An RNA of 207 nucleotides, treated with 2A3 and read out base by base. The data come from the RNA Mapping Database (RMDB), library VIROID. The RNA was probed in 150 mM KOAc, 10 mM MgCl2 and 150 mM bicine (pH 8.5) at 24 C. For 2A3 the reverse transcriptase was SuperScript II with manganese.

RNA sequence: GGGAACGACUCGAGUAGAGUCGAAAAUCUUCUUCUGCUCGGCGCGGCUCAUCUCGACAAGAGGCGGCGAUCCUCAGUACUCUUACUCUUUUCUGUAAAGAGGAGACUGCUGGAUCCGCCGCCCAAGUUCGAGCAUGAGCCAAGUCCGAGCGAAGAGCGAAGACUAAUGCUUCGGCAUUAGUCUUCGAAAAGAAACAACAACAACAAC
Reactivity to 2A3 in 0.01 (KOAc 150mM, MgCl2 10mM, bicine 150mM(pH8.5), 24C), signal-to-noise 2, nucleotides 027 to 156: u070c000u130u040c020u010u000c030u220g030c000u000c000g000g010c020g010c090g090g040c000u000c000a000u000c000u000c000g000a000c030a090a050g110a120g050g000c000g000g000c000g000a000u030c000c000u000c000a050g000u030a300c030u030c030u090u170a260c000u070c060u070u260u190u050c140u290g300u300a000a000a010g000a000g020g000a000g000a000c000u000g020c120u030g010g010a010u030c080c190g000c000c000g000c000c000c000a020a010g000u060u020c000g000a000g020c020a000u000g020a000g000c000c010a000a000g060u000c000c010g010a000g000c000g010a000a000g000a000g040